[RMDB]
RNA sequence: GGGAACGACUCGAGUAGAGUCGAAAAACAUAGGUCGCCUCCUUACGAGGAGGCCACCUAUGAAACACUCUCUAUCAGAAUGAAUUCUUGCUGUAAUAACAGAUAGAGUAGGUUGUUACAGACUAAAAUACGUGUGCAUUCUUCGGAAUGCACACAACAUGACGAAUAGGUUCGCCUAUUCGUCAUGAAAAGAAACAACAACAACAAC
Reactivity to DMS in 0.01 (KOAc 150mM, MgCl2 10mM, bicine 150mM(pH8.5), 24C), signal-to-noise 2, nucleotides 027 to 156: a200c040a040u000a030g000g100u000c080g000c000c000u010c000c000u000u000a090c250g030a140g020g000a020g020g040c020c050a010c000c000u000a040u010g000a080a090a060c090a110c020u000c010u000c020u000a040u000c040a120g000a190a130u000g000a230a130u000u010c120u000u010g030c050u020g010u010a020a060u000a030a060c020a150g000a070u000a030g000a100g040u000a060g040g000u000u020g000u010u020a080c030a060g030a130c050u000a050a060a100a240u030a080c090g000u030g010u030g030c000a000u000u000c040u000u010c260g000g000a010a010u000g020c000a000c000a000c000a010a080
Reactivity to 2A3 in 0.01 (KOAc 150mM, MgCl2 10mM, bicine 150mM(pH8.5), 24C), signal-to-noise 4, nucleotides 027 to 156: a000c000a000u010a000g020g000u000c010g010c000c000u020c000c000u070u060a080c240g110a010g000g000a000g000g020c000c000a000c010c000u000a000u000g010a000a030a000c080a030c010u020c000u000c000u020a020u040c010a020g130a280a140u090g050a100a140u290u060c050u110u230g080c010u000g010u020a020a010u020a030a010c000a020g050a050u030a010g020a020g040u070a050g060g000u000u010g010u000u010a020c010a030g080a100c120u230a080a050a070a020u200a110c140g000u010g000u000g000c000a010u000u010c000u020u040c120g010g010a000a000u000g000c010a000c010a000c000a000a000
Chemical mapping of a 207-nucleotide RNA with DMS and 2A3. For DMS, 2,496 sequencing reads were counted. Reactivities are given for positions 27 through 156. Source: RMDB library M2RFPK, as collected in RNAgym. For DMS the reverse transcriptase was MarathonRT.